[RMDB]
RNA sequence: GGGAACGACUCGAGUAGAGUCGAAAAUCACAAGUCGAACUCACGGUCGAAGAGUGUGCAGGUCUUGCUGCCGCGGUUUUGGCAAAUGCAACCAGACAGCGUUCGGUUUAUUUACAGGAGGCAAAGCACUUAGAAGACUAUUCGUAGUCUUCUAAGUAAAAGAAACAACAACAACAAC
Reactivity to 2A3 in 0.01 (KOAc 150mM, MgCl2 10mM, bicine 150mM(pH8.5), 24C), signal-to-noise 7, nucleotides 027 to 126: u100c020a020c020a100a030g050u040c010g030a040a020c010u010c050a040c080g080g010u040c020g060a080a030g050a040g070u090g040u080g020c050a020g020g070u040c040u070u120g050c020u030g010c010c010g010c040g070g020u040u090u150u150g040g000c020a030a070a080u140g000c010a020a020c010c010a020g020a040c020a020g050c030g050u060u040c010g000g040u020u090u060a110u040u150u060a050c030a030g000g060a020g040g030c040a080a050a010g050c020
Reactivity to DMS in 0.01 (KOAc 150mM, MgCl2 10mM, bicine 150mM(pH8.5), 24C), signal-to-noise 9, nucleotides 027 to 126: u010c050a100c110a100a110g010u000c030g010a040a140c030u000c040a100c130g010g010u000c080g010a080a090g000a100g020u010g020u010g020c060a070g010g010u000c060u000u000g010c030u000g010c090c020g020c070g010g010u000u010u000u010g020g010c030a060a080a090u000g010c100a070a070c030c020a090g000a060c060a090g010c060g010u000u000c050g010g010u000u000u000a060u010u000u000a070c100a060g010g010a080g010g010c060a050a070a120g010c150